[RMDB]
RNA sequence: GGGAACGACUCGAGUAGAGUCGAAAACACAGGCAUGGGCAACUAUCCUAAUACUGUCAUGUCGGUUGGGACAUUAGUGGAUAAUAAUGGUACAACUGCUACAACAACGUCAAAUACUGUAGCUGUGAUGGGUUUUGGCAGUGUUCCUACUAUGGAAGUUAGUGUAUUCAUUCGUGAAUACACUAACAAAAGAAACAACAACAACAAC
Reactivity to DMS in 0.01 (KOAc 150mM, MgCl2 10mM, bicine 150mM(pH8.5), 24C), signal-to-noise 4, nucleotides 027 to 156: c010a110c030a080g010g010c040a050u000g010g020g030c050a080a090c070u000a080u000c050c040u000a090a140u000a070c060u000g020u000c050a080u000g020u000c010g050g020u010u010g020g020g020a100c040a060u000u000a060g030u000g020g030a140u000a050a120u000a040a070u010g020g000u000a080c050a070a080c030u000g010c030u010a040c070a050a080c050a060a090c100g010u000c060a090a090a120u000a090c070u000g020u000a070g030c030u000g020u000g010a090u000g010g010g010u010u000u000u000g020g000c000a050g010u000g000u000u000c010c010u000a080c090u000a110u000g010g020a090a200
Reactivity to 2A3 in 0.01 (KOAc 150mM, MgCl2 10mM, bicine 150mM(pH8.5), 24C), signal-to-noise 9, nucleotides 027 to 156: c070a000c020a020g020g020c020a020u080g030g040g020c030a060a040c060u110a060u130c010c020u080a100a060u120a120c050u030g040u060c040a040u050g040u070c020g020g020u040u040g040g020g030a020c010a040u040u060a050g050u040g100g020a020u030a120a030u110a040a040u130g040g000u050a020c020a060a030c100u020g000c010u040a010c010a080a000c010a070a080c040g060u070c080a040a100a060u170a150c100u110g050u150a040g030c060u060g020u020g050a040u040g010g010g020u020u050u060u040g030g000c010a010g000u000g010u040u010c020c000u020a070c050u050a080u120g060g030a080a060

Structure probing data (DMS and 2A3) for a 207-nucleotide construct. 2A3 adducts were read by reverse transcription with SuperScript II with manganese. For DMS the reverse transcriptase was MarathonRT. The 2A3 profile rests on 10,308 reads. High DMS reactivity at an A or C suggests that its Watson-Crick edge is free. The reactions ran in a buffer of 150 mM KOAc, 10 mM MgCl2 and 150 mM bicine (pH 8.5), at 24 C.